About this RNA
The record gives the reactivity of an RNA of 177 nucleotides to DMS and 2A3. It was measured as part of the RMDB library OK2TRN. The DMS profile rests on 4,529 reads. Values cover nucleotides 27 to 126.
RNA sequence: GGGAACGACUCGAGUAGAGUCGAAAAGUAAGGCGCGAGCGCGGGCGCGGUGUCGGCCAUCUGGCGGAAGCUGGCAGCGGGCAGCGUGUCGCGGAAGGGACCGUACCCGCUGAGCUGCGAGAGCAGGCAAUGGGUUUAGCUUCGGCUAAACCCAUUGAAAAGAAACAACAACAACAAC
Reactivity to DMS in 0.01 (KOAc 150mM, MgCl2 10mM, bicine 150mM(pH8.5), 24C), signal-to-noise 3, nucleotides 027 to 126: g020u020a110a110g020g010c030g010c040g000a140g000c070g020c040g000g000g000c050g020c030g000g020u000g010u000c030g010g010c010c040a110u000c070u000g020g010c010g010g010a100a140g000c020u000g010g010c080a060g000c020g010g020g030c010a100g010c010g010u010g010u000c010g010c020g030g030a110a110g020g010g000a070c010c010g000u000a110c010c000c010g000c040u000g000a090g010c020u000g000c030g010a150g000a150g010c020a020g010g010
Reactivity to 2A3 in 0.01 (KOAc 150mM, MgCl2 10mM, bicine 150mM(pH8.5), 24C), signal-to-noise 2, nucleotides 027 to 126: g040u060a050a080g110g000c040g010c030g040a020g030c040g020c020g080g080g010c140g000c000g030g070u050g050u020c020g010g030c010c010a120u060c070u130g090g010c030g040g020a040a020g030c000u000g050g040c020a020g050c010g010g060g000c040a010g020c060g010u170g060u060c060g000c050g130g020a040a050g030g030g020a010c000c030g000u030a030c020c000c000g020c020u040g010a030g000c010u020g010c020g010a100g010a000g050c010a010g040g000